[RMDB]
RNA sequence: GGGAACGACUCGAGUAGAGUCGAAAAAGUAUCGGGUUCGCCCGAUACUAGAGCACCACUCCUGCGGGAGUAAAGGCCAAACGCACAGGCGGGUGCAAAGCCAACUCAAGGGUUUCGACCCUUGAAACUAUUUAGUCCUAUUCGUAGGACUAAAUAGAAAAGAAACAACAACAACAAC
Reactivity to DMS in 0.01 (KOAc 150mM, MgCl2 10mM, bicine 150mM(pH8.5), 24C), signal-to-noise 8, nucleotides 027 to 126: a030g010u000a000u000c000g010g000g020u000u000c220g020c010c000c000g010a010u000a000c010u000a050g010a210g000c030a030c010c010a080c010u000c010c000u000g020c190g030g010g000a060g010u000a020a070a130g000g000c020c020a050a110a120c160g010c130a070c180a100g010g000c030g010g010g000u000g010c010a080a080a120g010c030c040a080a090c190u000c010a010a010g000g000g000u000u000u010c150g000a050c000c000c000u000u000g010a020a070a200
Reactivity to 2A3 in 0.01 (KOAc 150mM, MgCl2 10mM, bicine 150mM(pH8.5), 24C), signal-to-noise 5, nucleotides 027 to 126: a000g000u000a000u000c000g000g020g030u040u060c200g070c040c000c000g000a000u010a000c000u000a000g000a010g010c010a000c010c000a020c010u010c000c000u050g010c260g100g010g000a010g010u040a080a060a010g080g000c000c000a090a080a020c140g010c080a070c030a110g060g000c020g020g010g010u020g000c000a050a000a020g030c020c000a050a050c050u010c020a000a000g020g010g020u020u070u100c160g090a030c000c000c000u000u000g000a010a000a000